[RMDB]
An RNA of 177 nucleotides, treated with 2A3 and read out base by base.
RNA sequence: GGGAACGACUCGAGUAGAGUCGAAAAAGUUGUCAGUUUUUCUUUAGUGUUGGAUUUAAUGAGAUCAAAAUAUUCAGUAAAUUAUUUGCUAAAUGUUAUGUUUGAGAUUCCAUCUUUAAGAAACAACCCCCAUCCAUAGAUUCGUCUAUGGAUGGGGAAAAGAAACAACAACAACAAC
Reactivity to 2A3 in 0.01 (KOAc 150mM, MgCl2 10mM, bicine 150mM(pH8.5), 24C), signal-to-noise 2, nucleotides 027 to 126: a000g070u080u030g010u090c150a140g000u000u000u000u040u000c050u020u070u020a040g050u030g070u280u020g000g000a000u080u080u080a120a130u230g070a010g010a180u050c080a100a000a000a000u030a000u000u000c010a000g010u020a000a100a100u300u300a240u170u080u050g050c050u040a000a030a030u050g000u040u060a050u070g080u090u000u180g060a090g000a130u200u000c000c000a000u050c000u010u050u030a080a000g000a010a040a000c000a000a000c000